[RMDB]
RNA sequence: GGGAACGACUCGAGUAGAGUCGAAAAGGCGCACGCCAUCCGCCUGCUCCUGGAGUUCACGGAUACCUCUUAUGAGGAGAAACGGUACACGUGCGGGGAAGCUCCUGACUAUGAUCGAAGCCAAUGGCCGAUCAAAUAGGUUCGCCUAUUUGAUCGGAAAAGAAACAACAACAACAAC
Reactivity to 2A3 in 0.01 (KOAc 150mM, MgCl2 10mM, bicine 150mM(pH8.5), 24C), signal-to-noise 4, nucleotides 027 to 126: g030g020c010g000c040a030c080g020c040c020a020u030c010c010g010c000c010u070g030c000u030c010c000u010g020g040a050g040u120u130c060a040c100g050g000a090u140a140c010c020u050c010u200u250a130u300g070a030g100g020a020g060a040a100a040c070g010g030u080a040c060a000c070g050u040g050c040g010g040g000g020a030a020g030c000u000c010c010u030g050a080c040u030a100u260g070a080u070c020g050a100a010g040c000c020a070a070u080g090g000
Reactivity to DMS in 0.01 (KOAc 150mM, MgCl2 10mM, bicine 150mM(pH8.5), 24C), signal-to-noise 5, nucleotides 027 to 126: g000g020c000g010c120a050c110g020c040c040a100u010c140c030g000c020c010u000g010c090u000c010c040u020g000g000a080g010u000u010c050a110c050g000g010a150u000a100c060c010u000c020u000u010a140u030g010a070g020g020a090g000a080a110a090c050g010g010u010a080c300a070c060g020u000g010c180g010g010g000g020a140a140g000c030u000c020c020u010g010a060c090u000a100u000g010a100u000c060g000a110a080g010c050c090a050a090u010g020g010

About this RNA: The record gives the reactivity of an RNA of 177 nucleotides to 2A3 and DMS. 2A3 adducts were read by reverse transcription with SuperScript II with manganese. The data come from the RNA Mapping Database (RMDB), library OK2TST.